[RMDB]
RNA sequence: GGGAACGACUCGAGUAGAGUCGAAAAACCAAACUGUUUGAUUCACAUCACACCCAAAUACAAACGGUUUAAAAAAGAGGAUGCUUUCAAAAUUUCAAGGUAACAAAAAGAGGUGCAAAUGUAUAUAGUAAACAAGACCAUUCGUGGUCUUGUUUACAAAAGAAACAACAACAACAAC
Reactivity to DMS in 0.01 (KOAc 150mM, MgCl2 10mM, bicine 150mM(pH8.5), 24C), signal-to-noise 1, nucleotides 027 to 126: a050c040c020a060a000a060c050u000g030u000u000u000g010a130u000u070c120a050c070a090u000c090a070c050a100c000c010c000a080a170a050u000a140c050a000a000a010c030g000g040u000u000u000a000a050a110a050a050a060g000a140g000g020a060u000g020c010u000u000u000c050a040a060a080a030u000u020u000c050a050a070g040g000u000a090a080c040a050a080a020a060a030g050a010g050g000u000g000c070a010a010a040u010g000u000a040u010a090u010a100
Reactivity to 2A3 in 0.01 (KOAc 150mM, MgCl2 10mM, bicine 150mM(pH8.5), 24C), signal-to-noise 3, nucleotides 027 to 126: a000c030c000a030a010a000c020u040g030u060u020u010g060a110u130u150c040a010c030a130u090c000a060c000a050c040c040c010a070a100a020u250a130c020a040a020a000c000g000g110u030u060u060a090a130a010a010a010a000g100a000g040g010a040u050g030c060u030u100u130c060a080a170a150a240u040u150u070c040a040a040g070g020u130a140a080c060a050a050a010a030a010g100a060g060g040u060g000c000a050a040a090u050g060u010a060u040a020u020a100

Description:
This 177-nucleotide RNA was probed chemically with DMS and 2A3. For 2A3 the reverse transcriptase was SuperScript II with manganese. Source: RMDB libraries RFM100 and RFMREP, as collected in RNAgym. The reactions ran in a buffer of 150 mM KOAc, 10 mM MgCl2 and 150 mM bicine (pH 8.5), at 24 C.